[RMDB]
RNA sequence: GGGAACGACUCGAGUAGAGUCGAAAAUGACCUUUGCAUUCACGCAGCGGUAAUCGUCGAUCCACGUGUCGCCACCGGACGACGUAUUGGACAGGAAUCCAACCAGACCAGUCGUGGGUGUGGACGAGGCUAAUUACUAGUUCGCUAGUAAUUAGCCAAAAGAAACAACAACAACAAC
Reactivity to 2A3 in 0.01 (KOAc 150mM, MgCl2 10mM, bicine 150mM(pH8.5), 24C), signal-to-noise 9, nucleotides 027 to 126: u120g080a080c010c000u040u050u090g010c020a030u020u030c020a010c060g000c020a030g050c040g040g020u050a030a100u100c010g010u000c000g040a260u010c010c020a070c120g050u060g080u170c110g120c190c020a060c030c050g010g020a020c010g000a000c010g010u020a070u010u050g020g010a020c110a150g160g120a060a040u010c000c010a010a040c030c020a030g060a090c000c020a020g070u160c010g000u020g010g020g010u020g010u020g050g030a070c090g040a060
Reactivity to DMS in 0.01 (KOAc 150mM, MgCl2 10mM, bicine 150mM(pH8.5), 24C), signal-to-noise 4, nucleotides 027 to 126: u040g010a140c010c000u000u000u000g000c010a060u020u020c070a050c010g000c080a140g010c070g000g000u000a080a060u030c010g010u010c000g010a090u010c000c010a050c300g000u020g010u020c150g000c180c040a110c050c170g000g000a100c010g010a020c020g030u010a090u010u000g000g000a070c100a130g020g010a100a170u010c010c030a040a050c120c090a100g000a040c060c010a110g000u010c020g000u000g000g010g020u000g000u000g000g000a020c100g000a190